[RMDB]
This 177-nucleotide RNA was probed chemically with 2A3 and DMS. In probing experiments dimethyl sulfate is read out at A N1 and C N3, which are open when not base-paired. DMS adducts were read by reverse transcription with MarathonRT. Conditions: 150 mM KOAc, 10 mM MgCl2 and 150 mM bicine (pH 8.5), 24 C. Source: RMDB library RFM100, as collected in RNAgym.
RNA sequence: GGGAACGACUCGAGUAGAGUCGAAAAUGUGGAGGUGGAUUAGAGCCACCUUGGUACGACAAGUAGCUUUAGCUGCUUGAACGUCACGACAGUGACGGCCCGGAGGGUGAGGCUCGCAGAGCCGAAUAAACAAUACUCGCUUCGGCGAGUAUUGUUUAAAAGAAACAACAACAACAAC
Reactivity to 2A3 in 0.01 (KOAc 150mM, MgCl2 10mM, bicine 150mM(pH8.5), 24C), signal-to-noise 2, nucleotides 027 to 126: u300g000u160g090g030a030g000g000u080g000g030a090u290u070a140g000a080g130c000c020a000c000c000u000u000g110g050u090a000c000g030a000c020a000a000g000u000a000g050c000u160u150u300a050g000c000u000g020c000u000u030g020a140a000c000g010u000c000a000c000g200a090c060a090g010u000g010a000c030g020g040c050c040c030g090g060a060g000g060g000u200g010a020g000g000c030u050c040g130c160a020g010a000g040c000c000g010a000a030u110
Reactivity to DMS in 0.01 (KOAc 150mM, MgCl2 10mM, bicine 150mM(pH8.5), 24C), signal-to-noise 2, nucleotides 027 to 126: u070g010u030g000g030a030g000g030u000g000g020a090u050u010a150g010a100g010c000c000a000c000c000u000u010g020g010u000a020c050g010a230c000a000a000g020u020a000g020c000u070u080u040a140g000c000u000g020c000u000u000g010a070a130c000g000u000c000a000c000g010a140c300a090g000u000g000a030c010g010g020c000c000c010g000g050a240g000g000g010u000g010a240g020g040c020u000c000g000c150a080g000a090g030c000c000g000a090a040u020